About this RNA:
Conditions: 150 mM KOAc, 10 mM MgCl2 and 150 mM bicine (pH 8.5), 24 C. The record gives the reactivity of an RNA of 177 nucleotides to DMS and 2A3. Reactivities are given for positions 27 through 126.
RNA sequence: GGGAACGACUCGAGUAGAGUCGAAAAUAACAGGAUCGAACGUACCCCGAGGUGGGGGAUAGCGGUGGGAAACUGCCGGUAAUACCUCAUGAUCUCUCCGGAGCAAAGCCUCGGCGCCUCGGGAUCGCUUGUGUAAGUGAUUCGUCACUUACACAAGAAAAGAAACAACAACAACAAC
Reactivity to DMS in 0.01 (KOAc 150mM, MgCl2 10mM, bicine 150mM(pH8.5), 24C), signal-to-noise 5, nucleotides 027 to 126: u010a100a110c150a090g010g000a100u000c060g010a060a250c070g010u010a120c110c000c000c000g010a030g000g030u000g010g010g000g000g010a070u000a070g000c020g020g020u000g010g000g000a110a070a140c000u000g010c010c000g000g000u000a100a060u000a170c000c000u000c000a030u000g000a060u020c010u000c020u000c160c100g000g000a030g020c140a030a040a040g010c010c010u020c270g030g010c060g010c010c010u010c000g000g010g000a020u000c040g030
Reactivity to 2A3 in 0.01 (KOAc 150mM, MgCl2 10mM, bicine 150mM(pH8.5), 24C), signal-to-noise 7, nucleotides 027 to 126: u210a040a040c080a060g100g050a100u170c060g060a050a060c020g010u050a040c010c000c000c000g000a010g000g000u010g010g010g000g000g000a000u030a010g100c000g010g000u020g020g000g000a030a060a030c000u010g010c010c000g010g010u020a050a020u080a130c000c000u020c010a040u100g090a120u040c040u000c010u000c040c100g090g010a010g000c040a120a130a020g010c010c010u030c040g040g010c000g000c000c000u010c000g030g000g000a010u010c000g000